About this RNA: Chemical mapping of a 177-nucleotide RNA with DMS. Values cover nucleotides 27 to 126. For DMS, 3,477 sequencing reads were counted.
[RMDB]
RNA sequence: GGGAACGACUCGAGUAGAGUCGAAAAUAAGGGAUGAGCUUCCCAACUGGAUUGACUAUUGGUAACCACCUUUCUAUGGGGGUUGGUUACCCCCUAUAGGACCCAUCUUACUGUGGGGCUUCCCUAACACACAGGUAGGAUUCGUCCUACCUGUGUGAAAAGAAACAACAACAACAAC
Reactivity to DMS in 0.01 (KOAc 150mM, MgCl2 10mM, bicine 150mM(pH8.5), 24C), signal-to-noise 3, nucleotides 027 to 126: u010a100a060g010g020g010a130u010g010a050g000c050u000u010c020c010c050a080a090c170u000g000g000a070u000u010g010a110c060u000a080u010u000g010g000u000a010a020c010c010a060c020c000u000u000u000c140u020a100u020g010g000g010g000g020u000u000g020g000u000u000a030c030c000c240c070c040u010a080u000a040g010g000a070c050c020c050a030u000c100u000u000a070c170u010g010u010g020g010g010g010c050u000u000c000c000c000u000a070a150